[RMDB]
An RNA of 207 nucleotides, treated with DMS and 2A3 and read out base by base. For 2A3, 545 sequencing reads were counted.
RNA sequence: GGGAACGACUCGAGUAGAGUCGAAAAUGAAAUCGGCAAAACCUACAAACUGGUUGAACCUAAAAUUAAAACUAAUGCCUUGAUUUCUGGUCAUAAAACUCUGACUGAUGUUUUUGGCGAAGGCGAAUUUAUUGUUGAAGAAUUUGCCAAAAGUGAGAUGUUCAGAAUUGUUCGCAAUUCUGAACAUAAAAGAAACAACAACAACAAC
Reactivity to DMS in 0.01 (KOAc 150mM, MgCl2 10mM, bicine 150mM(pH8.5), 24C), signal-to-noise 1, nucleotides 027 to 156: u010g020a040a130a080u020c030g010g080c050a090a130a040a050c070c030u030a300c040a140a080a170c140u000g000g030u000u000g000a180a060c030c030u000a050a010a020a100u010u000a000a100a110a020c130u000a030a080u000g010c030c010u030u020g000a080u000u000u000c030u000g040g000u010c040a080u010a100a050a080a110c040u000c210u000g000a170c020u000g010a040u000g010u000u000u020u000u030g030g010c050g000a040a150g100g000c000g000a060a000u000u010u000a080u060u020g030u000u000g000a130a180g000a030a070u000u000u000g010c040c010a040a070a020a060g000u000g010a090g010
Reactivity to 2A3 in 0.01 (KOAc 150mM, MgCl2 10mM, bicine 150mM(pH8.5), 24C), signal-to-noise 1, nucleotides 027 to 156: u100g030a050a000a000u010c010g000g000c010a000a000a000a170c010c020u060a060c110a160a180a070c100u090g000g010u120u040g030a020a050c000c070u180a080a120a010a000u120u120a020a010a020a080c030u060a170a000u060g040c010c000u000u060g000a000u020u040u000c030u070g000g060u010c040a020u160a170a090a040a020c060u090c110u190g040a050c060u030g030a020u130g020u050u040u040u030u040g060g030c040g010a040a020g000g010c030g040a030a010u070u090u050a050u060u230g070u020u100g000a010a030g020a030a070u000u020u020g000c000c000a040a000a080a000g060u060g030a050g020

2A3 adducts were read by reverse transcription with SuperScript II with manganese. Source: RMDB library OK3TST, as collected in RNAgym. The reactions ran in a buffer of 150 mM KOAc, 10 mM MgCl2 and 150 mM bicine (pH 8.5), at 24 C.